[RMDB]
RNA sequence: GGGAACGACUCGAGUAGAGUCGAAAAUCUGUUUACAAGUUAUCGUUAAGUCCAUGUCUGACUACGAUUCCUUAAACAGAAGCCAGUUUGAGUCAAGUCCGACAUGGACUCUUGGCAGAACUGAUCAGUAUCCCAUUUAGUUCGCUAAAUGGGAUACAAAAGAAACAACAACAACAAC
Reactivity to 2A3 in 0.01 (KOAc 150mM, MgCl2 10mM, bicine 150mM(pH8.5), 24C), signal-to-noise 4, nucleotides 027 to 126: u020c010u010g030u030u110u100a070c040a050a000g010u090u060a120u220c090g030u090u170a090a010g010u000c000c000a020u050g020u000c040u030g010a010c000u050a070c120g030a030u050u030c020c030u040u100a040a050a010c030a050g110a180a010g140c060c040a030g000u000u010u050g020a010g020u030c030a050a000g000u030c020c010g000a030c060a030u020g000g000a000c010u000c010u010u010g010g000c000a020g020a090a020c040u070g030a080u090c010a040
Reactivity to DMS in 0.01 (KOAc 150mM, MgCl2 10mM, bicine 150mM(pH8.5), 24C), signal-to-noise 6, nucleotides 027 to 126: u010c010u000g010u000u010u010a100c130a080a030g010u010u000a070u010c140g010u000u010a070a050g000u000c000c040a020u000g000u000c030u000g000a030c010u000a120c140g010a040u000u000c080c300u000u000a030a020a030c020a090g010a110a120g010c160c130a090g000u000u000u000g000a050g020u000c030a110a030g000u000c000c100g010a040c050a010u000g000g000a010c000u000c020u000u000g000g010c030a130g000a010a050c060u000g000a080u010c120a140